[RMDB]
RNA sequence: GGGAACGACUCGAGUAGAGUCGAAAAGCGGCGUUAGGGUCUCCUACCCUUCAGGGCCCACCUGGCAGAUAUACGAGGGCAAGGUAGAGCCAUGGAUGAUGAGCGACAACUGCACCGACAAUGUGCCAUCAAAUAGGAUCUUCGGAUCCUAUUUGAUAAAAGAAACAACAACAACAAC
Reactivity to DMS in 0.01 (KOAc 150mM, MgCl2 10mM, bicine 150mM(pH8.5), 24C), signal-to-noise 6, nucleotides 027 to 126: g020c070g030g010c030g020u000u010a060g020g000g010u000c050u000c050c050u010a220c040c010c020u000u000c120a090g010g000g010c020c020c050a120c040c040u000g000g010c070a060g010a080u010a070u010a080c120g010a200g000g000g010c020a050a050g010g020u000a050g010a190g010c020c030a060u000g010g000a070u000g000a070u000g000a090g010c030g000a080c080a080a060c070u010g000c010a060c030c040g010a080c120a070a080u010g020u000g010c030c100
Reactivity to 2A3 in 0.01 (KOAc 150mM, MgCl2 10mM, bicine 150mM(pH8.5), 24C), signal-to-noise 4, nucleotides 027 to 126: g010c050g050g010c080g060u070u110a080g040g030g030u010c050u060c050c020u050a070c000c010c000u050u060c020a030g020g030g000c030c010c000a030c010c000u000g010g000c010a020g090a080u110a020u020a170c090g040a100g000g060g000c030a050a020g040g020u110a040g010a010g070c020c000a040u060g110g000a050u080g020a020u030g020a040g040c020g040a020c020a070a030c030u060g010c010a050c040c010g040a030c040a040a050u110g030u090g050c000c020